This 177-nucleotide RNA was probed chemically with DMS and 2A3.
RNA sequence: GGGAACGACUCGAGUAGAGUCGAAAAGGAUGCUCGUUCGCGAGCAUCCACUGAGAUAGCCACUAUAAAGAUUAAGUCUUCCUACUCCAGACAGGAUGUCUAUGCUCCUGGCCUUCGGGCCAGGAAAACGUUAACUAUAAUUCGUUAUAGUUAACGUAAAAGAAACAACAACAACAAC
Reactivity to DMS in 0.01 (KOAc 150mM, MgCl2 10mM, bicine 150mM(pH8.5), 24C), signal-to-noise 5, nucleotides 027 to 126: g010g000a020u000g010c000u000c000g020u010u010c210g020c020g010a010g010c000a000u000c000c000a030c110u010g010a210g000a060u000a080g010c050c050a060c050u000a130u010a060a080a100g000a110u010u010a080a090g010u000c020u000u000c010c020u000a070c060u000c060c060a060g010a090c110a080g000g000a070u000g010u000c050u000a110u010g010c130u000c000c000u000g000g010c000c000u000u010c190g040g010g000c010c000a010g000g000a010a010a040
Reactivity to 2A3 in 0.01 (KOAc 150mM, MgCl2 10mM, bicine 150mM(pH8.5), 24C), signal-to-noise 3, nucleotides 027 to 126: g000g000a000u000g000c000u000c010g020u050u090c240g010c010g100a000g000c000a000u000c000c000a000c020u040g010a020g010a030u060a030g060c050c030a050c040u080a080u120a280a210a030g080a080u160u180a100a020g030u010c000u000u010c000c020u030a080c030u020c040c020a070g010a150c010a030g130g070a080u080g040u000c040u050a100u110g070c020u020c010c000u000g000g020c000c000u020u050c200g070g000g000c000c000a000g000g000a000a010a000